[RMDB]
RNA sequence: GGGAACGACUCGAGUAGAGUCGAAAAAACUGUAGUUGAUGAGACAAGAUCUGCAUGUAGUAAUAUUUGCACAGCAGUUUCUAAAUCCAUCGAGCAGGGAUUUAGUAGGUGGAUUGGCUAUAGCAUACGCAUGUGACGUAUUCGUACGUCACAUGCGAAAAGAAACAACAACAACAAC
Reactivity to DMS in 0.01 (KOAc 150mM, MgCl2 10mM, bicine 150mM(pH8.5), 24C), signal-to-noise 2, nucleotides 027 to 126: a050a070c030u020g030u000a040g030u000u000g000a060u000g000a300g010a040c050a190a080g020a090u000c060u000g010c000a120u000g020u000a040g020u040a040a070u010a120u000u000u000g030c030a040c070a070g010c050a030g000u000u010u020c010u000a020a020a050u000c010c010a040u010c020g000a110g010c120a060g000g000g000a080u010u000u000a100g010u000a080g020g000u000g010g020a150u000u000g000g000c050u000a010u010a030g030c080a050u010a120
Reactivity to 2A3 in 0.01 (KOAc 150mM, MgCl2 10mM, bicine 150mM(pH8.5), 24C), signal-to-noise 2, nucleotides 027 to 126: a000a000c040u010g000u030a030g020u010u030g090a020u040g030a010g020a050c020a090a040g040a080u050c000u000g000c040a240u060g010u020a100g060u040a090a110u070a230u280u120u120g020c010a010c010a010g000c000a010g000u000u000u100c030u020a040a040a000u050c010c000a040u070c090g040a030g020c060a050g000g050g000a040u050u050u050a060g060u030a040g030g190u040g030g050a050u010u010g000g040c000u010a010u000a070g040c020a060u060a170

An RNA of 177 nucleotides, treated with DMS and 2A3 and read out base by base. For DMS the reverse transcriptase was MarathonRT. The reactions ran in a buffer of 150 mM KOAc, 10 mM MgCl2 and 150 mM bicine (pH 8.5), at 24 C.